[RMDB]
An RNA of 207 nucleotides, treated with 2A3 and DMS and read out base by base. The reactions ran in a buffer of 150 mM KOAc, 10 mM MgCl2 and 150 mM bicine (pH 8.5), at 24 C. For 2A3, 1,412 sequencing reads were counted. Reactivities are given for positions 27 through 156. It was measured as part of the RMDB library M2RFPK.
RNA sequence: GGGAACGACUCGAGUAGAGUCGAAAAGACAAGAUCUCCUUCUCUCCAACGUUGUUGCCAACUCAUGAUUUUCCUAACCUGUGCUUGGAGAGACGUGGACCCAGAGUCAGAGGACCUCUGACUUCCAAAAACCCGUUUCGGUUCGCCGAAACGGGAAGGAGUAUAAUUAGUUCGCUAAUUAUACUCCAAAAGAAACAACAACAACAAC
Reactivity to 2A3 in 0.01 (KOAc 150mM, MgCl2 10mM, bicine 150mM(pH8.5), 24C), signal-to-noise 2, nucleotides 027 to 156: g050a010c090a030a040g020a270u020c010u020c010c000u020u000c030u000c000u020c000c010a050a040c080g010u020u020g030u030u030g090c070c010a060a100c070u120c140a130u120g120a170u070u080u120u170c000c040u070a090a110c020c040u080g050u110g100c030u020u030g000g010a000g010a010g010a000c020g040u090g010g010a010c000c000c020a040g000a000g050u010c000a000g000a020g080g120a070c010c010u020c000u000g010a020c000u060u000c070c020a040a100a070a080a080c000c010c020g000u000u000u000c010g010g030u020u060c190g030c050c000g010a000a000a000c000g000g010g000a000a020
Reactivity to DMS in 0.01 (KOAc 150mM, MgCl2 10mM, bicine 150mM(pH8.5), 24C), signal-to-noise 2, nucleotides 027 to 156: g000a140c090a110a070g000a290u000c010u030c040c010u000u000c000u010c000u010c010c000a080a100c110g010u000u000g010u000u000g000c040c070a040a100c030u000c020a120u000g010a150u000u000u010u010c020c060u000a070a080c070c020u000g020u000g010c070u000u000g000g010a000g000a050g000a010c090g010u020g000g010a120c010c010c000a210g000a050g030u000c000a030g000a050g000g010a190c220c040u000c010u000g000a070c010u000u000c010c020a050a070a060a150a150c010c000c010g020u000u000u000c000g020g000u000u010c300g000c000c030g000a020a010a020c000g020g010g010a000a010